RNA sequence: GGGAACGACUCGAGUAGAGUCGAAAAAGAGGCGAUACGUCGCCUCAAGCUUGGUGCUUAGCUUCUUUCACCAGGCAUAUUACACGCGGAUAACCGCCAAAGGAGAAACACUGACUACGGUCAGUGAGGAAGUUGGUUCGGUUCGCCGAACCAACAACUACUUCGUAUUGUUCGCAAUACGAAGUAGAAAAGAAACAACAACAACAAC
Reactivity to 2A3 in 0.01 (KOAc 150mM, MgCl2 10mM, bicine 150mM(pH8.5), 24C), signal-to-noise 5, nucleotides 027 to 156: a000g000a000g000g000c000g000a000u030a060c200g080u010c000g000c000c000u000c010a000a000g000c000u000u010g000g000u000g000c030u040u040a050g040c000u040u010c000u010u020u010c010a000c000c000a010g000g000c020a020u070a050u100u150a060c070a020c040g020c000g010g040a110u100a300a300c020c010g000c020c020a040a030a010g020g000a010g000a040a070a010c010a000c000u000g000a000c000u030a020c140g050g000u000c000a000g000u010g010a000g020g040a090a090g000u000u000g000g000u000u000c000g000g040u020u050c190g000c050c000g000a000a000c000c000a000a000c000a000a000
Reactivity to DMS in 0.01 (KOAc 150mM, MgCl2 10mM, bicine 150mM(pH8.5), 24C), signal-to-noise 3, nucleotides 027 to 156: a090g010a020g040g000c000g030a080u010a070c280g090u000c020g000c010c010u000c010a010a090g030c030u000u000g000g020u000g010c110u000u010a050g030c130u000u000c010u010u000u000c020a040c030c020a020g000g010c010a140u000a050u010u010a100c080a150c100g000c020g020g020a170u000a090a130c020c020g030c000c080a040a140a050g010g040a090g000a170a170a190c010a000c000u000g000a040c000u000a130c300g070g010u000c000a010g000u000g000a040g010g030a040a120g010u000u000g000g010u000u000c000g060g030u000u000c300g020c030c000g000a020a000c000c000a000a000c000a030a110